[RMDB]
RNA sequence: GGGAACGACUCGAGUAGAGUCGAAAACACAAAACACCCACCACCCCUGUGGUGGGUGGUGCAUUCGCCUAUAUUCUGCGGAAUUUCGCCUGGCGUAUGGAUGAAGAGGAUUUUAUCCGAAUCCUUAACGCAGUCUUAGGUUCGCCUAAGACUGCGUAAAAGAAACAACAACAACAAC
Reactivity to 2A3 in 0.01 (KOAc 150mM, MgCl2 10mM, bicine 150mM(pH8.5), 24C), signal-to-noise 3, nucleotides 027 to 126: c050a000c030a020a130a050a000c010a000c000c000c000a020c000c000a010c030c120c040c130u190g000u010g040g000u010g010g000g000u000g000g000u020g010c000a020u040u030c000g030c000c000u070a070u040a050u160u050c040u030g040c070g080g130a110a140u020u090u180c100g080c040c020u030g010g000c010g010u010a010u020g000g100a070u040g130a140a110g000a010g040g000a010u030u030u030u110a190u180c040c030g000a000a010u000c000c000u000u020a000
Reactivity to DMS in 0.01 (KOAc 150mM, MgCl2 10mM, bicine 150mM(pH8.5), 24C), signal-to-noise 1, nucleotides 027 to 126: c010a030c150a050a080a100a210c000a010c000c000c000a030c030c000a000c000c180c230c120u010g000u030g000g010u000g050g000g020u000g000g000u000g020c000a020u000u000c050g000c000c030u000a100u000a120u000u010c090u000g070c100g030g010a060a040u040u000u000c120g000c170c010u000g000g010c020g000u030a010u000g000g030a080u030g000a100a040g010a080g000g040a050u000u000u010u030a030u090c100c190g040a050a030u000c000c030u000u000a130